[RMDB]
RNA sequence: GGGAACGACUCGAGUAGAGUCGAAAAGAUAUGGAUGUACUGGAACUACCUCUGGAUUCGGAAACGAAUCCUGAGGCCAAGGUACAUCCUAAGUCAAAAGGAAGAGUGAGUUCGCUCACUCUUCCAACAUCAACUAACGGUUCGCCGUUAGUUGAUGAAAAGAAACAACAACAACAAC
Reactivity to 2A3 in 0.01 (KOAc 150mM, MgCl2 10mM, bicine 150mM(pH8.5), 24C), signal-to-noise 3, nucleotides 027 to 126: g030a010u040a000u080g010g000a000u000g000u000a000c010u030g040g080a180a060c200u220a220c230c010u000c010u020g010g000a000u000u000c010g030g010a030a040a030c000g010a000a000u010c030c000u000g010a000g000g000c030c010a020a010g000g000u010a000c000a000u010c000c000u000a000a020g000u000c010a000a040a070a110g010g000a000a000g000a000g010u010g020a010g020u090u180c260g100c120u000c000a000c000u000c000u000u000c000c000a000a000
Reactivity to DMS in 0.01 (KOAc 150mM, MgCl2 10mM, bicine 150mM(pH8.5), 24C), signal-to-noise 3, nucleotides 027 to 126: g010a000u010a140u000g000g010a000u000g000u000a000c010u000g000g000a120a300c300u000a170c010c010u000c010u010g000g000a000u000u000c010g010g010a040a060a060c020g000a000a010u000c000c000u000g000a000g030g020c090c070a150a160g000g000u000a000c010a020u000c000c000u010a020a070g010u010c020a130a060a110a140g000g010a020a010g000a030g010u000g000a000g020u000u010c230g000c000u000c000a010c000u000c000u000u000c000c000a020a080